[RMDB]
RNA sequence: GGGAACGACUCGAGUAGAGUCGAAAAGGUGAUGGCUGCUUUCUAACUGGCAGUCCUGGGCAGUGCCUUGAGGGGAGGCAUUUCUUCUAAAGCUCAGCUCUCACUUGUGCCUCCAGGAGAGUCAAACCGGACUACUAACGUUCGCGUUAGUAGUCCGAAAAGAAACAACAACAACAAC
Reactivity to 2A3 in 0.01 (KOAc 150mM, MgCl2 10mM, bicine 150mM(pH8.5), 24C), signal-to-noise 1, nucleotides 027 to 126: g020g000u020g030a090u130g050g000c010u000g040c020u030u110u150c070u120a130a190c070u050g030g000c000a000g030u040c000c020u050g000g000g000c010a020g050u020g040c020c020u030u090g050a060g000g010g050g000a000g030g000c000a050u070u070u050c050u150u000c030u150a110a080a020g030c010u000c060a050g040c020u000c000u020c020a050c010u040u070g040u100g040c000c010u000c040c010a030g110g010a060g020a010g040u050c050a070a060a000c060
Reactivity to DMS in 0.01 (KOAc 150mM, MgCl2 10mM, bicine 150mM(pH8.5), 24C), signal-to-noise 1, nucleotides 027 to 126: g020g020u000g000a100u000g000g010c000u000g000c040u000u010u000c160u010a160a190c230u020g000g000c010a010g000u010c010c070u010g000g010g020c090a110g020u000g010c030c000u000u000g000a130g000g000g030g000a070g000g010c000a060u010u000u010c070u000u000c180u010a080a040a100g000c040u000c040a110g000c120u000c080u010c030a100c050u000u000g030u010g010c010c010u000c030c070a090g000g000a130g000a090g020u000c130a080a100a140c210
Background: The record gives the reactivity of an RNA of 177 nucleotides to 2A3 and DMS. DMS adducts were read by reverse transcription with MarathonRT. For 2A3 the reverse transcriptase was SuperScript II with manganese. The 2A3 profile rests on 1,406 reads. Values are in units of 0.01, from 0 to 300, in steps of 10.